An RNA of 207 nucleotides, treated with 2A3 and read out base by base. Values cover nucleotides 27 to 156. Conditions: 150 mM KOAc, 10 mM MgCl2 and 150 mM bicine (pH 8.5), 24 C. The data come from the RNA Mapping Database (RMDB), library M2RFPK.
[RMDB]
RNA sequence: GGGAACGACUCGAGUAGAGUCGAAAAUUAAUGAAGCAAAUCUCCAAACGCCAACGAUGAGCGUUUCGCAAUCGCCGCUCAAGGCUUUUGCCGAGGCUGCUUGAGCCUUGUUACCAAAGAAAAGCCGAAAACCCAAAUGUCUUCGGACAUUUGGGAACUAAGACUCGUACUUCGGUACGAGUCUUAGAAAAGAAACAACAACAACAAC
Reactivity to 2A3 in 0.01 (KOAc 150mM, MgCl2 10mM, bicine 150mM(pH8.5), 24C), signal-to-noise 1, nucleotides 027 to 156: u200u120a010a080u240g100a090a010g000c010a010a130a170u060c080u010c080c050a090a060a000c030g010c000c050a030a060c140g130a230u100g040a120g040c020g000u040u040u090c070g000c010a000a040u040c040g000c040c010g060c090u110c180a080a030g000g000c000u030u050u000u000g020c000c000g000a000g000g010c040u090g000c010u010u030g070a000g000c000c000u020u000g060u100u100a060c020c020a050a000a000g000a010a100a060a010g050c010c010g070a000a060a040a120c010c000c000a000a000a000u000g000u000c020u020u050c180g120g000a020c010a000u010u010u010g000g010g010a000a000